Background: The record gives the reactivity of an RNA of 177 nucleotides to DMS and 2A3. It was measured as part of the RMDB library OK2TRN. Reactivities are given for positions 27 through 126. The RNA was probed in 150 mM KOAc, 10 mM MgCl2 and 150 mM bicine (pH 8.5) at 24 C.
RNA sequence: GGGAACGACUCGAGUAGAGUCGAAAAGAAGGCGUCUUCCCUGACAACAUUGCCCUGUUCCAGGUGGCAAUUCCAUGGGAGCAGCCGUUUGAGGCGCGGCACAUAAAGAGCAUGGAGCUCGUUGUGCGGUCUUCAAGCAAUUCGUUGCUUGAAGACCAAAAGAAACAACAACAACAAC
Reactivity to DMS in 0.01 (KOAc 150mM, MgCl2 10mM, bicine 150mM(pH8.5), 24C), signal-to-noise 2, nucleotides 027 to 126: g000a170a070g020g020c030g010u000c000u000u000c020c010c020u000g000a050c160a070a050c150a040u000u010g000c020c070c030u000g000u000u000c100c130a110g010g010u020g010g000c110a060a060u000u000c070c030a040u000g010g000g000a020g000c100a080g030c070c050g020u000u030u020g010a100g000g010c050g000c030g030g000c000a050c070a060u000a050a060a140g000a030g020c000a180u000g010g020a210g020c020u000c010g020u010u000g010u000g000c010
Reactivity to 2A3 in 0.01 (KOAc 150mM, MgCl2 10mM, bicine 150mM(pH8.5), 24C), signal-to-noise 2, nucleotides 027 to 126: g060a030a060g070g030c000g040u000c000u030u070c000c000c000u040g020a020c060a130a010c030a030u060u120g010c000c000c000u020g090u120u050c110c050a030g130g050u040g100g000c000a050a060u110u040c020c010a040u080g050g000g010a020g030c010a030g010c010c000g020u040u040u060g070a020g010g050c110g000c000g140g070c020a010c000a040u220a100a300a010g030a010g000c030a040u230g150g090a140g010c010u000c020g070u010u060g040u000g050c070